[RMDB]
The data come from the RNA Mapping Database (RMDB), library TTRDES. This 177-nucleotide RNA was probed chemically with DMS and 2A3. Values are in units of 0.01, from 0 to 300, in steps of 10. DMS adducts were read by reverse transcription with MarathonRT. Reactivities are given for positions 27 through 126. For DMS, 1,301 sequencing reads were counted. For 2A3, 1,241 sequencing reads were counted. The reactions ran in a buffer of 150 mM KOAc, 10 mM MgCl2 and 150 mM bicine (pH 8.5), at 24 C.
RNA sequence: GGGAACGACUCGAGUAGAGUCGAAAAAAGAUAUGGAUCCUGUUUAAAUGUCCUUCAGGCUUGGAUUUAUUUGCUCGGAAACGAGCAAAUUGUCAGCCUGAGGACGGUAAACAGGAUCCUAAGUCAAGCUUUAUUCUCUCUUCGGAGAGAAUAAAGCAAAAGAAACAACAACAACAAC
Reactivity to DMS in 0.01 (KOAc 150mM, MgCl2 10mM, bicine 150mM(pH8.5), 24C), signal-to-noise 1, nucleotides 027 to 126: a070a060g000a040u000a300u000g030g000a000u000c000c000u010g010u000u000u000a010a050a150u060g010u000c000c000u020u020c000a000g020g000c020u010u000g020g000a020u000u000u000a010u000u000u000g000c000u010c000g000g000a070a110a280c030g000a010g000c030a000a000a000u000u000g000u000c010a030g010c000c000u000g010a030g010g000a000c020g000g000u010a010a010a040c000a020g020g000a000u000c020c000u010a000a060g020u000c100a090a140
Reactivity to 2A3 in 0.01 (KOAc 150mM, MgCl2 10mM, bicine 150mM(pH8.5), 24C), signal-to-noise 1, nucleotides 027 to 126: a010a000g030a020u030a020u080g000g000a000u020c010c030u000g100u010u020u010a180a300a170u100g000u030c030c020u300u280c090a000g010g000c040u180u300g080g000a020u060u300u160a030u080u040u070g020c010u030c010g020g030a150a120a130c000g040a020g000c000a000a030a000u000u010g010u010c000a000g000c000c000u000g000a010g010g000a000c000g000g020u000a020a010a000c000a000g000g000a010u020c010c010u010a060a000g000u000c110a100a000
For 2A3 the reverse transcriptase was SuperScript II with manganese.